Structure probing data (DMS and 2A3) for a 177-nucleotide construct. Source: RMDB library TTRDES, as collected in RNAgym. Reactivities are given for positions 27 through 126. For 2A3, 4,229 sequencing reads were counted. For DMS, 3,914 sequencing reads were counted.
RNA sequence: GGGAACGACUCGAGUAGAGUCGAAAAGAUAUGGAUUUGUCCCUCAACUGAACUACGACGGCUCUCGGAAACGAGAGCGGUCGCAGUUGAAGACAAAUCCUAAGUCAAACGGGCGUUCGCGCCCGAACAUCUAAAGCUUCUUCGGAAGCUUUAGAUGAAAAGAAACAACAACAACAAC
Reactivity to DMS in 0.01 (KOAc 150mM, MgCl2 10mM, bicine 150mM(pH8.5), 24C), signal-to-noise 4, nucleotides 027 to 126: g010a040u010a300u000g010g000a020u010u000u000g010u010c050c130c190u000c010a010a000c010u000g000a130a070c170u020a300c010g010a020c010g010g030c000u000c000u000c000g010g010a110a110a200c000g010a020g000a000g010c000g000g020u010c000g010c000a000g010u010u010g000a160a230g000a020c000a000a000a000u000c000c000u000a010a090g010u000c030a060a150a240c030g000g010g010c010g020u000u020c230g030c020g030c010c010c000g000a030a140
Reactivity to 2A3 in 0.01 (KOAc 150mM, MgCl2 10mM, bicine 150mM(pH8.5), 24C), signal-to-noise 2, nucleotides 027 to 126: g010a030u130a050u180g000g000a000u000u030u010g010u000c080c030c060u010c000a000a010c010u020g070a090a060c070u200a060c300g030a010c060g300g000c000u000c000u020c000g010g080a150a060a030c010g010a010g000a000g000c000g030g000u000c010g060c000a000g000u010u010g000a030a000g020a000c000a000a010a000u000c000c000u000a150a030g090u020c040a130a090a120c040g000g020g000c040g030u130u150c300g040c000g020c100c000c010g010a000a020